[RMDB]
RNA sequence: GGGAACGACUCGAGUAGAGUCGAAAAAAGAUCUUUGGUAUUUAAGUGUCAACAUCGAUUUAUUUAUUUAUUGCUGAGCUGACUGUAACUGACUCAAUAACAAAUCUAAUCGUGUAUUGCACUGGAAUCCCCUCUCAUAAUUCGUUAUGAGAGGGGAAAAAGAAACAACAACAACAAC
Reactivity to DMS in 0.01 (KOAc 150mM, MgCl2 10mM, bicine 150mM(pH8.5), 24C), signal-to-noise 5, nucleotides 027 to 126: a090a060g000a070u010c030u000u010u010g030g010u010a090u000u010u000a100a050g010u000g000u010c120a120a030c030a040u030c020g000a020u000u000u010a020u010u000u010a060u010u000u000a030u010u000g010c300u010g000a080g000c010u010g000a100c160u030g010u030a090a120c050u010g000a090c030u000c010a010a010u010a000a000c240a010a010a010u010c170u000a010a010u000c020g020u010g000u000a130u010u000g000c010a020c000u000g000g030a060a080
Reactivity to 2A3 in 0.01 (KOAc 150mM, MgCl2 10mM, bicine 150mM(pH8.5), 24C), signal-to-noise 6, nucleotides 027 to 126: a000a000g110a050u080c060u080u060u040g050g020u130a140u050u110u070a080a030g000u000g090u120c030a000a010c000a040u120c040g000a000u020u020u020a020u030u050u010a090u050u060u010a030u020u050g040c080u020g010a040g100c010u010g140a180c060u090g100u160a130a060c020u010g060a070c000u010c020a000a040u030a040a030c040a020a040a020u050c050u070a000a000u010c010g000u010g020u040a100u060u060g000c000a010c000u010g010g030a030a040